[RMDB]
RNA sequence: GGGAACGACUCGAGUAGAGUCGAAAAUCGAGCGCUCUCCCGCCCCUCGGAUGGGCCGCUUCCGGCGAACGAGCCCGAAGAGCGAGUGGGGGAGAACUCCCGAGAGUUGGGAGACAGAAAGAGGGCGGUUAAGUCAACAGUUCGCUGUUGACUUAACAAAAGAAACAACAACAACAAC
Reactivity to DMS in 0.01 (KOAc 150mM, MgCl2 10mM, bicine 150mM(pH8.5), 24C), signal-to-noise 1, nucleotides 027 to 126: u000c060g000a130g020c300g010c070u000c010u000c000c000c010g010c010c010c160c000u000c010g000g000a300u010g000g000g000c040c020g010c140u010u010c060c110g000g000c090g010a070a130c000g000a140g030c010c010c000g000a300a140g000a010g010c170g000a000g050u000g000g000g000g000g000a060g000a040a020c030u000c000c020c030g000a170g000a100g010u010u010g040g020g010a060g000a040c080a050g010a060a050a170g000a060g000g000g030c180g000
The record gives the reactivity of an RNA of 177 nucleotides to DMS. Values cover nucleotides 27 to 126. Source: RMDB library 15KREP, as collected in RNAgym. The RNA was probed in 150 mM KOAc, 10 mM MgCl2 and 150 mM bicine (pH 8.5) at 24 C. The DMS profile rests on 790 reads.